[RMDB]
RNA sequence: GGGAACGACUCGAGUAGAGUCGAAAAAGCAUUUAGCCUGAUUACUCUUUAAAUCAAAUCAGGCAAUAGAGAGAAACUCGAGAGGUGAAAACCCCACAGCAUUCUGAAAUGUAUUUGGGAGUAAUCUAUGACUAUUGGGUCUUCGGACCCAAUAGAACUAACGUAAAUGAUUCGUCAUUUACGUUAGAAAAGAAACAACAACAACAAC
Reactivity to 2A3 in 0.01 (KOAc 150mM, MgCl2 10mM, bicine 150mM(pH8.5), 24C), signal-to-noise 3, nucleotides 027 to 156: a000g040c040a040u130u140u260a020g010c000c000u000g020a020u010u100a100c020u040c100u120u210u300a070a110a060u080c040a020a050a040u000c000a010g000g000c020a000a000u030a000g020a000g030a000g010a040a100a030c030u010c060g030a050g010a030g070g040u030g020a020a020a050a090c010c000c050c000a060c030a010g070c010a050u110u080c070u140g060a120a100a040u040g000u070a220u040u060u050g020g000g000a110g030u030a020a020u050c080u100a110u190g110a070c000u000a000u010u010g000g000g000u000c000u050u030c150g080g000a000c000c000c000a000a010u000a000g000a010a010
Reactivity to DMS in 0.01 (KOAc 150mM, MgCl2 10mM, bicine 150mM(pH8.5), 24C), signal-to-noise 2, nucleotides 027 to 156: a120g010c070a140u000u000u000a140g010c000c000u000g000a040u000u000a120c040u000c050u000u010u010a050a070a050u000c030a100a090a120u010c020a010g000g000c000a060a020u000a100g010a110g000a180g010a150a170a080c020u000c050g040a160g020a050g000g040u010g000a130a110a110a070c010c010c000c030a060c050a150g000c020a070u000u020c050u010g040a090a100a080u000g000u010a060u000u000u000g000g030g010a070g010u010a060a080u010c040u000a150u000g010a110c000u000a020u000u000g010g020g030u000c000u000u010c300g050g000a040c000c000c010a000a000u000a020g000a090a130